[RMDB]
RNA sequence: GGGAACGACUCGAGUAGAGUCGAAAAGAGAUGCUACGAAGAGAUGGGUAGUCCUAACUGUGUUUGUGCAUGUUAGGUCUAUGUUUCAUUGUACAAACACAGUGACCGUCUCGAAAGUAGCAUCGAAGGGUAUUGAUAACUUCGGUUAUCAAUACCCAAAAGAAACAACAACAACAAC
Reactivity to 2A3 in 0.01 (KOAc 150mM, MgCl2 10mM, bicine 150mM(pH8.5), 24C), signal-to-noise 5, nucleotides 027 to 126: g140a000g000a000u000g000c000u000a000c000g030a080a070g000a000g000a010u060g050g030g080u140a140g100u130c050c060u060a060a010c000u010g000u010g020u000u020u000g010u040g000c000a000u010g020u050u110a050g080g090u070c060u120a210u190g200u030u060u060c020a020u090u110g000u000a000c000a000a010a000c010a000c000a010g000u000g000a030c000c000g010u000c010u000c000g000a020a020a010g000u000a000g000c000a000u000c000g000a020a030
Reactivity to DMS in 0.01 (KOAc 150mM, MgCl2 10mM, bicine 150mM(pH8.5), 24C), signal-to-noise 2, nucleotides 027 to 126: g010a300g040a000u010g010c000u000a010c000g000a170a200g000a000g000a020u000g000g000g010u000a070g010u050c110c160u030a090a040c000u010g000u010g000u000u000u000g050u000g010c000a000u000g000u010u000a040g020g030u040c220u030a020u080g000u000u010u000c000a020u000u020g030u000a000c000a000a030a010c000a000c000a000g000u000g000a030c010c000g000u000c010u020c040g010a020a120a260g020u000a020g000c000a000u000c000g000a120a020

An RNA of 177 nucleotides, treated with 2A3 and DMS and read out base by base.
Reactivities are given for positions 27 through 126.
For DMS, 3,799 sequencing reads were counted.
The data come from the RNA Mapping Database (RMDB), library OK1LIB.
2A3 adducts were read by reverse transcription with SuperScript II with manganese.